[RMDB]
Structure probing data (2A3) for a 207-nucleotide construct.

RNA sequence: GGGAACGACUCGAGUAGAGUCGAAAAACAGUACCAGAUGCUACGGCAGCUGGUACUGAACUUUCAUGGAGUUAAGAAACCACGUAAACAAAGCGGAACCGAAAAGCUAAACGAGUAGGAAGAAUAAAUAGGUACCACCACUUCGGUGGUGGUACAACAGUUGUUCGAUGUUCGCAUCGAACAACUGAAAAGAAACAACAACAACAAC
Reactivity to 2A3 in 0.01 (KOAc 150mM, MgCl2 10mM, bicine 150mM(pH8.5), 24C), signal-to-noise 1, nucleotides 027 to 156: a000c000a000g000u000a000c000c010a000g020a020u000g000c000u010a030c150g050g000c030a030g000c000u020g050g010u010a000c040u000g000a000a020c030u010u080u060c050a100u090g030g060a010g000u090u120a060a040g140a130a060a000c050c030a050c060g040u110a060a120a210c090a100a100a000g000c020g050g020a010a020c000c010g010a000a000a000a000g010c070u220a140a090a000c050g000a000g010u000a000g030g070a020a030g070a070a130u180a050a010a020u130a060g040g050u000a000c010c010a000c000c000a000c000u050u090c190g060g000u000g000g000u000g000g000u000a000c000a000a020